[RMDB]
RNA sequence: GGGAACGACUCGAGUAGAGUCGAAAAUGUGUGUGUGUCUAUAUAUGUGUGCAUGUCUCUCUCUACAUGUAUAUGUGUAUAUGUAUGUAUAUAUAUGCAUAUGUACAUACAUGCCACACAUGCACAUAUACACAUACUCACAGAGAACAAAAUUAUAGCGCCCUAAAUAGUUCGCUAUUUAGGGCGCAAAAGAAACAACAACAACAAC
Reactivity to 2A3 in 0.01 (KOAc 150mM, MgCl2 10mM, bicine 150mM(pH8.5), 24C), signal-to-noise 2, nucleotides 027 to 156: u060g010u000g000u000g010u010g000u020g030u090c100u110a050u000a020u010a010u130g000u000g000u010g000c000a000u000g040u010c030u000c000u020c010u020c030u300a060c040a090u050g010u060a130u030a000u160g000u000g010u000a000u010a010u130g000u020a000u000g030u000a020u030a000u020a000u000a020u300g040c030a000u040a000u010g000u000a000c000a000u000a010c020a000u000g080c090c000a050c010a000c000a020u000g000c000a000c000a000u000a000u000a010c040a000c000a000u010a070c010u040c030a080c010a000g090a000g040a100a020c040a010a140a080a050u300u300a210u220a090
Structure probing data (2A3) for a 207-nucleotide construct. The RNA was probed in 150 mM KOAc, 10 mM MgCl2 and 150 mM bicine (pH 8.5) at 24 C.